[RMDB]
The record gives the reactivity of an RNA of 207 nucleotides to DMS and 2A3. DMS adducts were read by reverse transcription with MarathonRT. For DMS, 2,097 sequencing reads were counted.
RNA sequence: GGGAACGACUCGAGUAGAGUCGAAAAUGAUCAUAUAGUUAAUCUAUUAUUUUGUGCAAAUAGAUGGGAGUUUGCAUCUUUUAUACAAGAACAACUAGAACAGGGAAUUACUUUAAUAGUUGAUAGAUACGCAUUCUCUGGAGUAGCGUAUGCCGCCGAACUAAGACUUGUUCGCAAGUCUUAGUUCAAAAGAAACAACAACAACAAC
Reactivity to DMS in 0.01 (KOAc 150mM, MgCl2 10mM, bicine 150mM(pH8.5), 24C), signal-to-noise 2, nucleotides 027 to 156: u000g020a170u000c050a160u000a140u000a100g000u010u000a090a080u030c020u000a080u000u000a100u020u020u000u000g030u030g000c000a040a010a040u000a040g010a170u000g000g040g040a190g020u000u000u000g000c000a080u010c040u050u000u000u000a140u000a110c090a030a090g000a090a140c030a040a040c040u000a040g030a050a210c070a040g020g010g010a170a090u000u010a030c030u010u000u010a070a160u000a130g000u000u010g010a160u000a030g010a190u000a040c080g040c040a070u000u000c030u000c100u040g000g010a140g040u010a080g040c020g050u010a080u000g010c000c020g040c210c130
Reactivity to 2A3 in 0.01 (KOAc 150mM, MgCl2 10mM, bicine 150mM(pH8.5), 24C), signal-to-noise 3, nucleotides 027 to 156: u050g010a050u090c030a040u110a030u030a160g030u070u090a130a050u120c020u030a100u150u010a130u030u260u070u090g030u010g000c010a000a010a050u010a040g030a060u050g030g030g000a070g030u030u090u040g000c020a040u060c050u000u140u060u100a130u010a100c090a070a010g020a100a030c020a010a010c020u030a020g010a070a000c010a030g010g000g080a060a140u150u070a090c020u050u090u140a070a070u070a050g010u010u020g020a050u040a140g050a010u020a040c020g000c020a020u070u000c090u000c060u080g090g030a020g030u070a020g010c000g000u010a020u050g040c030c030g030c030c010

The RNA was probed in 150 mM KOAc, 10 mM MgCl2 and 150 mM bicine (pH 8.5) at 24 C.